Background:
Source: RMDB library OK2TRN, as collected in RNAgym. Chemical mapping of a 177-nucleotide RNA with DMS.

[RMDB]
RNA sequence: GGGAACGACUCGAGUAGAGUCGAAAAGGAUGACUACACUGCUCAUGUUGCAACCACAAGUCCUGUCAUUGAGCAUCAAAGAUUAAAAGGCUUAUUUAGUAGUCUAACAAUCAGCAAGAACUAUCAGGGCGACGUACAUAUUCGUAUGUACGUCGCCAAAAGAAACAACAACAACAAC
Reactivity to DMS in 0.01 (KOAc 150mM, MgCl2 10mM, bicine 150mM(pH8.5), 24C), signal-to-noise 1, nucleotides 027 to 126: g000g000a050u000g000a030c010u000a000c020a300c130u000g000c000u000c000a010u000g050u000u000g000c090a110a200c100c020a090c160a110a130g010u000c040c020u000g000u000c100a110u000u000g000a030g000c060a050u000c070a060a090a060g060a020u010u020a020a040a230a040g000g000c000u000u000a000u000u000u060a090g000u000a040g010u000c020u000a040a230c230a050a060u000c020a000g050c160a060a150g010a020a180c210u000a040u000c220a180g000